Source: RMDB library OK2TST, as collected in RNAgym. Structure probing data (2A3 and DMS) for a 177-nucleotide construct. Values cover nucleotides 27 to 126. For 2A3 the reverse transcriptase was SuperScript II with manganese. High DMS reactivity at an A or C suggests that its Watson-Crick edge is free.
[RMDB]
RNA sequence: GGGAACGACUCGAGUAGAGUCGAAAAUCUGUCGGGUUAUCAGAGGAGAUACCGAUCGAAUCGGUGCUGCCACAAGCAAAGAGGGAGCCAGUUGUGUUCGCGAGUGCAUCGAGGGAGCUGGAUGAUAACGUAUCAUUAGGUUCGCCUAAUGAUACGUAAAAGAAACAACAACAACAAC
Reactivity to 2A3 in 0.01 (KOAc 150mM, MgCl2 10mM, bicine 150mM(pH8.5), 24C), signal-to-noise 7, nucleotides 027 to 126: u040c030u030g040u030c030g020g010g040u100u110a060u080c040a020g050a100g250g060a090g020a040u050a050c010c010g010a020u060c080g090a040a070u030c020g030g010u040g010c020u050g040c010c020a070c020a080a040g030c020a090a050a030g070a050g020g020g000a010g030c010c010a040g030u090u080g080u060g020u050u050c040g010c030g070a030g040u070g000c010a030u060c040g010a040g010g020g000a010g000c030u040g040g000a050u080g030a040u100a110
Reactivity to DMS in 0.01 (KOAc 150mM, MgCl2 10mM, bicine 150mM(pH8.5), 24C), signal-to-noise 9, nucleotides 027 to 126: u000c030u010g020u010c050g000g000g000u000u010a060u000c050a120g010a150g010g000a120g010a080u000a060c020c010g010a040u000c200g010a050a300u000c030g010g020u000g010c040u000g010c030c030a090c130a100a110g000c080a050a070a080g010a150g010g010g010a080g020c050c050a060g010u000u000g010u000g020u000u000c060g010c090g000a070g010u010g010c050a040u000c050g010a100g000g000g000a090g010c050u000g000g000a080u000g000a100u000a070